[RMDB]
RNA sequence: GGGAACGACUCGAGUAGAGUCGAAAAACGACCGUAUACCCACACGUAUUGAGGGACACUCUCCUUCUCUUCAAGAAACUUGGGCUAAGCGUCACGGUCUCUACAAGGGCGCUCGAUAGUGGGGGAAGGAGUAUCAAUCAUUCGUGAUUGAUACUCCAAAAGAAACAACAACAACAAC
Reactivity to DMS in 0.01 (KOAc 150mM, MgCl2 10mM, bicine 150mM(pH8.5), 24C), signal-to-noise 3, nucleotides 027 to 126: a100c150g020a090c040c020g010u020a180u020a150c000c020c000a110c130a070c110g010u010a110u000u010g020a050g010g000g000a100c190a100c220u010c070u000c020c000u010u000c010u010c020u000u000c100a080a090g010a060a100a030c060u000u020g010g000g020c090u000a060a090g010c040g020u000c020a050c050g000g000u000c020u010c040u000a050c180a050a170g000g000g020c010g000c010u000c090g010a060u000a030g030u010g000g000g000g000g020a140a110
Reactivity to 2A3 in 0.01 (KOAc 150mM, MgCl2 10mM, bicine 150mM(pH8.5), 24C), signal-to-noise 3, nucleotides 027 to 126: a000c020g030a040c030c010g010u030a060u080a120c010c020c010a050c000a010c090g090u070a050u040u060g030a030g020g030g010a010c020a040c180u190c010u010c020c000u080u030c040u030c000u160u110c060a060a040g090a120a180a070c040u070u060g000g020g000c050u070a080a020g030c010g030u020c010a010c070g030g000u010c040u020c010u100a100c050a120a110g020g020g020c030g000c010u000c020g030a030u070a070g060u090g000g040g000g000g010a080a030